RNA sequence: GGGAACGACUCGAGUAGAGUCGAAAACUGUGUGAUACCCACACACGCACAGCCUGGUGAUGAUGUACUAGUGAAUGGUCAGAAAAUUAGAGUUAAGGAUAAGUACAAAUUAGUAGAUCCAGAGAACCUUCGGUUUUAAGUUCGCUUAAAACCGAAGAAAAGAAACAACAACAACAAC
Reactivity to 2A3 in 0.01 (KOAc 150mM, MgCl2 10mM, bicine 150mM(pH8.5), 24C), signal-to-noise 5, nucleotides 027 to 126: c010u000g000u010g000u010g050a100u190a180c010c020c000a050c020a000c010a010c030g030c020a060c010a020g040c000c010u020g000g040u030g010a060u010g000a020u060g010u030a020c000u030a010g080u050g220a120a100u070g060g060u100c090a050g190a110a140a020a040u130u200a080g030a040g170u120u200a060a050g040g030a080u050a130a020g020u020a040c000a030a110a120u080u060a080g090u030a030g010a080u020c010c000a000g040a010g030a130a040c010
Reactivity to DMS in 0.01 (KOAc 150mM, MgCl2 10mM, bicine 150mM(pH8.5), 24C), signal-to-noise 3, nucleotides 027 to 126: c160u010g030u000g000u000g020a130u060a070c010c000c000a170c050a050c040a060c030g010c150a080c120a040g010c040c050u010g000g010u010g000a130u020g010a140u020g010u010a010c040u000a080g000u030g000a140a140u020g000g010u000c060a090g000a010a060a050a190u000u030a070g000a100g000u000u000a090a110g000g000a070u000a020a090g020u020a030c020a070a030a110u030u010a060g000u040a040g000a100u010c000c030a070g000a120g000a030a080c130